Annotation:
This 177-nucleotide RNA was probed chemically with DMS and 2A3. Values cover nucleotides 27 to 126. The DMS profile rests on 2,712 reads. DMS adducts were read by reverse transcription with MarathonRT.
RNA sequence: GGGAACGACUCGAGUAGAGUCGAAAAAAGGGUGAAGCCAGCUAUUACAGCGUGACUACCGACGCCGGCGACAUCGUCGACGACGUGAUGUGGACGUACGAAAACCCUUAUCCGGCGGUAGCGGCGACGGCAUGUGAGAUUUCGAUCUCACAUGCCGAAAAGAAACAACAACAACAAC
Reactivity to DMS in 0.01 (KOAc 150mM, MgCl2 10mM, bicine 150mM(pH8.5), 24C), signal-to-noise 2, nucleotides 027 to 126: a020a010g000g000g040u010g010a070a120g010c020c000a160g030c060u020a110u000u020a130c110a070g000c020g030u000g010a050c050u000a120c150c040g000a140c050g000c000c020g000g050c000g040a090c120a230u010c090g000u010c000g000a060c050g000a160c110g000u000g000a130u030g010u000g010g020a050c080g040u040a140c220g000a140a010a140a120c030c000c000u010u030a130u020c010c020g000g000c060g010g000u000a040g010c040g020g010c090g000a150
Reactivity to 2A3 in 0.01 (KOAc 150mM, MgCl2 10mM, bicine 150mM(pH8.5), 24C), signal-to-noise 4, nucleotides 027 to 126: a000a000g110g020g000u060g030a060a000g020c020c030a020g010c060u090a050u150u170a130c080a050g000c010g010u030g020a030c010u030a000c010c000g020a000c000g010c010c000g040g000c010g120a140c050a110u240c030g000u000c010g050a040c010g040a020c020g120u160g070a120u110g030u080g080g020a030c060g010u200a010c060g050a020a010a040a070c020c010c000u000u040a070u060c000c000g010g000c020g030g000u010a010g000c010g010g000c000g020a020